RNA sequence: GGGAACGACUCGAGUAGAGUCGAAAAAUUUCAAAUUAUGCCCAUUGUAUCGUGGAUGUGAACCUCCAGAAAUCGAUUAUCAUAUGGUUCCAAUGUUCAUAAGAGAAGUGACGCUUACCGAUCAUCAUAAAUACGCUCAUUUCGAUGAGCGUAUUUAAAAAGAAACAACAACAACAAC
Reactivity to 2A3 in 0.01 (KOAc 150mM, MgCl2 10mM, bicine 150mM(pH8.5), 24C), signal-to-noise 2, nucleotides 027 to 126: a000u060u090u060c010a050a040a040u070u040a020u090g010c000c000c000a020u010u120g070u030a130u060c070g040u070g060g040a050u080g040u080g080a020a050c010c010u060c030c010a050g090a020a090a020u180c100g090a090u130u180a100u220c060a020u060a060u170g020g000u060u000c020c020a050a040u060g010u040u090c000a000u010a100a000g040a000g000a080a020g020u030g050a000c070g050c090u050u030a090c000c060g080a070u080c000a020u010c000a020
Reactivity to DMS in 0.01 (KOAc 150mM, MgCl2 10mM, bicine 150mM(pH8.5), 24C), signal-to-noise 5, nucleotides 027 to 126: a050u010u000u000c060a040a090a090u010u000a030u010g010c080c070c020a070u000u000g020u000a070u010c070g020u000g000g010a060u010g010u000g000a060a090c060c030u010c050c060a100g000a050a090a090u000c130g010a080u020u010a110u000c080a070u010a070u010g000g000u000u000c040c030a040a050u000g010u000u010c020a050u000a060a040g010a220g000a060a070g020u000g000a080c120g010c080u000u000a080c070c040g000a080u000c070a060u010c140a110